The record gives the reactivity of an RNA of 207 nucleotides to 2A3 and DMS. Reactivities are given for positions 27 through 156. For 2A3, 2,465 sequencing reads were counted.
RNA sequence: GGGAACGACUCGAGUAGAGUCGAAAAAGCAGUUCGCUGCUCUGCAGGGGGUCAGGUCUCUAGCGUGGCUGUUGACGACUGGUACUGAAGCCUCCACGGUACACAGUCGAAGGGCUCGGGCCUGACGGAGGCACCCUCGAAAGCCUUUCGAGGCUAAUAGACAUUUAAAGUUCGCUUUAAAUGUCUAAAAAGAAACAACAACAACAAC
Reactivity to 2A3 in 0.01 (KOAc 150mM, MgCl2 10mM, bicine 150mM(pH8.5), 24C), signal-to-noise 3, nucleotides 027 to 156: a020g020c030a010g010u130u140c120g070c120u030g030c030u030c070u160g100c150a110g030g000g010g000g020u010c010a010g000g020u050c090u020c030u220a030g030c020g110u220g160g010c070u100g090u300u210g070a060c000g000a000c000u000g000g010u000a000c000u020g030a120a010g000c010c000u010c000c020a040c000g000g000u010a000c300a000c000a020g000u000c010g010a070a110g230g050g000c000u010c010g000g000g010c010c000u000g010a010c010g000g000a000g010g020c000a000c000c010c000u000c000g040a070a120a150g120c000c050u100u060u060c110g030a020g000g000c000u020a020a030
Reactivity to DMS in 0.01 (KOAc 150mM, MgCl2 10mM, bicine 150mM(pH8.5), 24C), signal-to-noise 1, nucleotides 027 to 156: a090g020c020a030g020u000u000c210g050c020u000g010c020u000c050u000g010c060a150g000g000g000g040g010u000c020a030g010g010u010c000u010c080u010a090g000c030g020u000g040g000c040u010g010u000u010g010a220c020g000a050c000u000g010g000u000a050c000u000g030a060a090g010c000c010u000c020c010a300c040g030g000u010a040c010a160c000a030g000u030c000g000a050a090g000g030g010c000u000c060g020g000g010c000c010u000g000a050c020g000g000a050g000g030c000a070c170c000c000u000c000g000a060a080a120g000c170c090u000u010u010c080g000a060g040g030c010u010a090a160
Background
It was measured as part of the RMDB library RNAMAK. For DMS the reverse transcriptase was MarathonRT.